[RMDB]
RNA sequence: GGGAACGACUCGAGUAGAGUCGAAAAGAUAUGGAUGCAAUGAGCUUUGAUCUAUAUCGAAUCGGAAACGAUUCGAGUAUAGGGAGCUCUUGCAUCCUAAGUCAAAAGUUGGUCUUCGGACCAACAAUCUAUUAGCAAGCUUCGGCUUGCUAAUAGAAAAAGAAACAACAACAACAAC
Reactivity to 2A3 in 0.01 (KOAc 150mM, MgCl2 10mM, bicine 150mM(pH8.5), 24C), signal-to-noise 3, nucleotides 027 to 126: g000a010u070a010u160g000g000a000u000g000c020a020a100u300g010a020g010c010u280u270u300g120a170u180c020u020a020u010a010u050c010g000a000a000u010c000g020g020a050a040a060c000g020a000u000u020c000g000a030g060u050a010u000a020g130g050g040a000g000c010u030c010u000u000g000c000a000u010c000c000u000a000a010g010u010c020a010a030a020a280g000u000u000g000g020u010c010u040u120c300g130g000a000c000c000a000a000c000a000a020
Reactivity to DMS in 0.01 (KOAc 150mM, MgCl2 10mM, bicine 150mM(pH8.5), 24C), signal-to-noise 3, nucleotides 027 to 126: g030a020u010a300u000g000g000a010u000g000c010a010a000u020g010a010g020c020u010u000u010g020a100u000c000u000a000u000a010u000c000g020a020a010u000c000g000g020a160a080a190c000g010a020u000u000c000g010a040g010u010a000u000a010g010g000g010a010g010c000u000c000u000u000g010c010a000u000c000c010u000a010a080g010u000c040a120a090a150a190g020u000u000g000g000u000c000u000u030c210g040g010a000c000c000a010a000c000a030a090
Chemical mapping of a 177-nucleotide RNA with 2A3 and DMS. The DMS profile rests on 3,598 reads. The data come from the RNA Mapping Database (RMDB), library TTRDES.